[RMDB]
RNA sequence: GGGAACGACUCGAGUAGAGUCGAAAACGGUGGUGUCAUGGUCAUUGUUGACCGUUCAUAUGAACCCUGCAAUAGCAUUGCAGCUUGUGUGGGGUUCAUAUAACGGUCAACAGAGACCAUUGACAUCACGCCGAUGUCCCUUCGGGGACAUCGGCGUAAAAGAAACAACAACAACAAC
Reactivity to 2A3 in 0.01 (KOAc 150mM, MgCl2 10mM, bicine 150mM(pH8.5), 24C), signal-to-noise 2, nucleotides 027 to 126: c050g040g030u030g010g000u000g000u000c000a000u000g020g000u020c020a060u090u000g000u000u000g010a010c010c010g000u020u020c050a000u000a000u000g000a000a000c000c000c000u000g000c010a040a030u030a030g000c000a040u020u300g080c160a070g000c130u100u130g040u010g010u050g050g020g000g000u000u000c000a000u000a000u000a000a000c000g000g010u000c000a000a000c000a000g000a000g000a000c000c000a000u010u050g000a000c000a000u000c000